[RMDB]
Structure probing data (2A3 and DMS) for a 207-nucleotide construct.
Source: RMDB library OK3TST, as collected in RNAgym.
Reactivities are given for positions 27 through 156.
High DMS reactivity at an A or C suggests that its Watson-Crick edge is free.
Conditions: 150 mM KOAc, 10 mM MgCl2 and 150 mM bicine (pH 8.5), 24 C.
The DMS profile rests on 1,673 reads.
RNA sequence: GGGAACGACUCGAGUAGAGUCGAAAACACCUUCUUCAUCAGUAUGGCGAAGAGAGGCACCAUCACUCCGGACAAGCUGAACAAGAUCACAGAGGAGCUGGCAGAAACGCUCGGGAUCUCGAUGGAGCUUGAGGCGUCUAGCAUUCGACUAGCCUUAGAUGGCCUAUUAUUUCGAUAAUAGGCCAUCAAAAGAAACAACAACAACAAC
Reactivity to 2A3 in 0.01 (KOAc 150mM, MgCl2 10mM, bicine 150mM(pH8.5), 24C), signal-to-noise 1, nucleotides 027 to 156: c090a020c000c000u100u000c000u040u040c040a170u070c010a080g140u190a240u230g140g050c070g050a080a000g100a000g030a030g040g000c020a020c080c020a000u170c050a010c010u040c030c000g060g040a030c010a120a010g080c020u030g040a080a010c060a010a030g060a040u080c030a040c080a160g200a050g080g000a010g030c000u010g030g000c040a030g110a130a090a000c050g010c010u000c000g060g040g000a080u000c020u020c130g080a120u060g120g040a020g010c000u070u060g030a020g000g000c020g000u020c000u000a010g060c000a100u090u170c040g020a040c030u020a010g000c010c020u000u030a050
Reactivity to DMS in 0.01 (KOAc 150mM, MgCl2 10mM, bicine 150mM(pH8.5), 24C), signal-to-noise 1, nucleotides 027 to 156: c070a100c020c000u000u000c020u010u010c000a090u000c030a140g060u000a120u000g040g020c020g000a060a120g010a110g000a030g020g050c050a110c030c030a110u000c100a120c030u000c020c020g000g000a150c020a070a110g120c000u020g040a060a100c010a090a100g030a070u000c090a130c100a120g010a090g000g040a050g040c020u000g020g000c100a120g000a110a100a040c010g000c000u020c010g010g050g010a050u000c080u000c090g000a160u000g020g010a030g040c070u000u010g000a300g040g020c050g020u000c020u000a050g060c010a270u000u020c080g020a060c000u010a130g020c010c030u000u000a190